[RMDB]
RNA sequence: GGGAACGACUCGAGUAGAGUCGAAAAGAUAUGGACGUCAUAUUGAGCUCGAUGGUCGGAAACGACCAUUCUUGGAGCAAUGAUGUAUACGUCCUAAGUCAAACUGUACAUCUUCGGAUGUACAGAACAGGUUCGUAAAGUUCGCUUUACGAACCUGAAAAGAAACAACAACAACAAC
Reactivity to 2A3 in 0.01 (KOAc 150mM, MgCl2 10mM, bicine 150mM(pH8.5), 24C), signal-to-noise 2, nucleotides 027 to 126: g010a000u010a020u030g010g000a000c000g040u020c180a000u020a010u000u070g000a000g000c000u000c030g020a010u010g000g050u010c000g000g060a010a010a000c050g000a020c000c000a020u090u010c040u060u250g300g040a000g020c000a030a300u020g000a000u000g010u020a010u000a010c000g000u000c010c020u000a010a010g000u000c040a000a060a180c020u000g000u010a000c000a010u000c000u050u090c300g140g000a000u010g010u020a030c000a020g000a000a000
Reactivity to DMS in 0.01 (KOAc 150mM, MgCl2 10mM, bicine 150mM(pH8.5), 24C), signal-to-noise 2, nucleotides 027 to 126: g000a060u000a010u040g000g000a000c000g020u020c250a000u000a010u000u010g000a050g050c010u000c030g000a000u000g000g000u000c000g090g000a000a030a020c020g000a010c000c000a000u000u010c250u040u000g050g040a020g030c000a220a300u010g000a040u000g000u000a010u010a000c000g000u000c000c000u010a040a050g010u000c000a090a140a260c000u000g020u000a000c000a010u000c000u020u000c160g010g000a030u000g000u020a000c000a000g000a130a140